[RMDB]
RNA sequence: GGGAACGACUCGAGUAGAGUCGAAAAGGGCUUUCAUCUGGACUGGGAGGUGCUGUUGGUUAUCUUGUCGGCAGUGUCGUUGAUGAUGUUGCCGAUACUGCAAAGCCCAUGACCGAUGGUGGGCACCAGCAAUCAGAUAAUUAUCCUCAUGAAGAGCCAAAGGAAUAAGAUUCGUCUUAUUCCUUUGAAAAGAAACAACAACAACAAC
Reactivity to DMS in 0.01 (KOAc 150mM, MgCl2 10mM, bicine 150mM(pH8.5), 24C), signal-to-noise 4, nucleotides 027 to 156: g010g020g020c030u000u000u000c040a060u000c050u000g020g010a120c060u000g010g020g000a130g030g020u010g030c010u000g020u000u000g010g030u000u010a090u000c040u000u020g020u000c010g020g020c000a030g010u010g040u000c000g020u000u000g020a160u000g000a050u000g020u000u000g010c020c020g010a010u000a010c070u010g020c090a080a110a170g010c030c030c030a060u000g000a250c050c070g020a090u010g000g010u000g000g010g070c010a060c090c010a070g000c070a090a150u010c100a050g010a070u000a030a070u000u000a090u000c020c010u000c030a100u020g000a050a090g010a070g020c090
Reactivity to 2A3 in 0.01 (KOAc 150mM, MgCl2 10mM, bicine 150mM(pH8.5), 24C), signal-to-noise 5, nucleotides 027 to 156: g050g000g010c020u030u080u070c020a030u020c030u060g010g060a040c030u030g010g060g010a130g070g020u060g020c030u030g000u060u040g010g010u080u040a050u090c070u030u060g020u010c020g000g000c000a010g010u020g000u020c010g070u120u190g090a160u190g000a000u020g050u030u010g000c000c000g000a000u000a000c010u040g060c050a060a080a060g020c010c030c010a010u040g070a050c010c040g040a040u090g060g010u030g000g070g000c030a030c030c000a010g000c030a010a100u100c010a020g020a030u030a040a010u110u110a050u080c000c030u050c050a080u120g070a060a050g040a020g040c030